This 177-nucleotide RNA was probed chemically with 2A3 and DMS. For 2A3 the reverse transcriptase was SuperScript II with manganese. For DMS, 2,809 sequencing reads were counted. Source: RMDB library M2PK50, as collected in RNAgym. The 2A3 profile rests on 4,389 reads. The RNA was probed in 150 mM KOAc, 10 mM MgCl2 and 150 mM bicine (pH 8.5) at 24 C.
RNA sequence: GGGAACGACUCGAGUAGAGUCGAAAAGCUGUUCUGUUCGCAGAACAGCAAAGGGAAGCAUCUCAAGCAUUUCAACGUAGGGAGCACCAAGCAUUUCAAAAAAAACGGAUAAGUUCGCUUAUCCGAAUCGUUCUUAAUACUUCGGUAUUAAGAACGAAAAAGAAACAACAACAACAAC
Reactivity to 2A3 in 0.01 (KOAc 150mM, MgCl2 10mM, bicine 150mM(pH8.5), 24C), signal-to-noise 4, nucleotides 027 to 126: g010c010u000g010u010u000c000u020g020u020u070c240g020c050a000g000a010a000c000a000g010c000a030a040a000g040g000g010a140a020g030c020a240u020c020u030c060a100a080g030c020a110u090u240u200c060a090a040c070g030u040a080g020g010g010a010g020c020a020c020c020a030a010g040c030a130u100u210u220c150a050a030a010a020a000a000a010a040c010g000g000a000u000a010a010g020u030u090c180g010c100u000u000a000u000c000c010g000a000a030
Reactivity to DMS in 0.01 (KOAc 150mM, MgCl2 10mM, bicine 150mM(pH8.5), 24C), signal-to-noise 3, nucleotides 027 to 126: g010c010u000g010u000u000c000u010g010u010u000c210g010c010a010g000a030a010c000a000g000c010a000a050a080g020g020g000a110a070g020c030a100u000c030u010c030a140a140g020c060a100u000u020u020c180a060a090c070g010u000a070g010g010g010a060g020c060a060c030c030a080a140g000c110a080u000u000u000c020a020a000a030a100a030a060a100a130c020g000g000a020u000a000a010g020u000u020c250g000c000u000u000a000u000c000c000g030a010a020